[RMDB]
This 207-nucleotide RNA was probed chemically with DMS and 2A3. DMS adducts were read by reverse transcription with MarathonRT. Values cover nucleotides 27 to 156. It was measured as part of the RMDB library OK3TST. Conditions: 150 mM KOAc, 10 mM MgCl2 and 150 mM bicine (pH 8.5), 24 C. The 2A3 profile rests on 1,672 reads.
RNA sequence: GGGAACGACUCGAGUAGAGUCGAAAACUUUUGAACACAGAACAUAGUAUAGCGUUUAUGAGCAAAAACAAUGGUACGGCAAGAACGUACAUUAGGUAUACUUCCAUUUUUCAAAAUUGUCGAGGAGCUGCUCUUUGUAUGAAAUGAUAAGAGCUUAAUAGAUAGUUGGUUUCGACCAACUAUCUAUAAAAGAAACAACAACAACAAC
Reactivity to DMS in 0.01 (KOAc 150mM, MgCl2 10mM, bicine 150mM(pH8.5), 24C), signal-to-noise 3, nucleotides 027 to 156: c020u010u000u000u010g000a020a050c040a060c070a180g000a130a300c080a180u000a150g010u010a170u010a130g020c050g040u010u000u000a050u000g010a040g060c050a060a070a090a060a070c060a080a080u000g020g020u000a040c020g050g020c020a160a110g010a110a170c050g010u000a020c020a050u000u000a010g030g020u000a090u010a060c050u010u000c030c020a050u000u000u000u020u010c060a100a110a120a120u000u010g010u010c020g030a150g000g000a080g010c100u000g000c020u000c020u010u000u020g010u000a080u020g020a100a140a090u000g000a150u000a030a060g000a060g000c010u010u000a060
Reactivity to 2A3 in 0.01 (KOAc 150mM, MgCl2 10mM, bicine 150mM(pH8.5), 24C), signal-to-noise 4, nucleotides 027 to 156: c010u050u060u070u160g090a080a020c060a010c050a090g090a120a030c060a070u120a080g130u120a100u040a130g110c050g030u050u100u020a100u150g040a070g030c030a040a070a050a030a010c080a050a040u090g110g000u030a000c010g000g000c060a070a100g080a220a030c010g010u010a010c000a010u050u080a040g040g000u050a040u040a110c010u070u030c030c010a100u070u030u010u030u090c080a150a130a100a150u100u080g030u060c080g020a050g040g050a080g040c040u030g010c000u040c000u050u030u030g060u020a100u070g080a080a080a090u100g010a030u020a050a010g020a000g000c000u020u030a070